Chemical mapping of a 207-nucleotide RNA with 2A3 and DMS.

RNA sequence: GGGAACGACUCGAGUAGAGUCGAAAAUAGGCAUUUUAGAUACAGUAAUGUACCUUAAUACUCACAGCAACGUUAGGAGGAAACUGAUUCAGUAACUUGCCCAUGGUUACUCUGCUAGCAAGUAGCAGACCCAGGGUUUGAACCCAGGUACUUCCUACCUAAAUAGGCAUUUCGAUGCCUAUUUAGGAAAAGAAACAACAACAACAAC
Reactivity to 2A3 in 0.01 (KOAc 150mM, MgCl2 10mM, bicine 150mM(pH8.5), 24C), signal-to-noise 4, nucleotides 027 to 156: u140a020g030g000c010a030u010u030u040u100a090g030a070u130a080c080a030g090u120a090a050u040g030u110a100c010c000u070u060a070a020u050a170c060u050c050a090c020a060g110c040a090a060c110g040u060u060a010g000g010a010g000g040a270a300a040c010u000g000a100u070u070c010a020g080u060a110a150c080u090u150g020c000c020c000a160u010g000g000u000u040a060c020u010c000u010g010c000u000a040g030c120a300a060g210u020a000g020c000a010g000a010c000c000c010a010g000g000g000u020u040u040g030a020a000c020c100c010a000g000g030u010a030c010u010u010c010c010u020a040
Reactivity to DMS in 0.01 (KOAc 150mM, MgCl2 10mM, bicine 150mM(pH8.5), 24C), signal-to-noise 1, nucleotides 027 to 156: u000a070g000g020c000a050u010u000u000u030a010g030a010u000a000c020a060g010u010a190a130u000g020u000a020c000c000u000u010a030a040u000a020c040u000c060a230c090a080g010c070a090a110c090g020u010u000a060g000g010a060g000g000a100a080a130c030u010g000a070u000u000c030a060g010u000a010a070c070u000u000g000c020c010c040a140u000g020g000u000u000a030c050u000c000u000g010c000u000a060g010c150a080a160g020u000a010g010c030a010g000a050c100c010c020a090g000g010g000u000u000u000g000a070a100c010c010c030a050g000g000u010a140c050u010u000c000c010u000a200
Conditions: 150 mM KOAc, 10 mM MgCl2 and 150 mM bicine (pH 8.5), 24 C. It was measured as part of the RMDB library OK3TST. DMS adducts were read by reverse transcription with MarathonRT.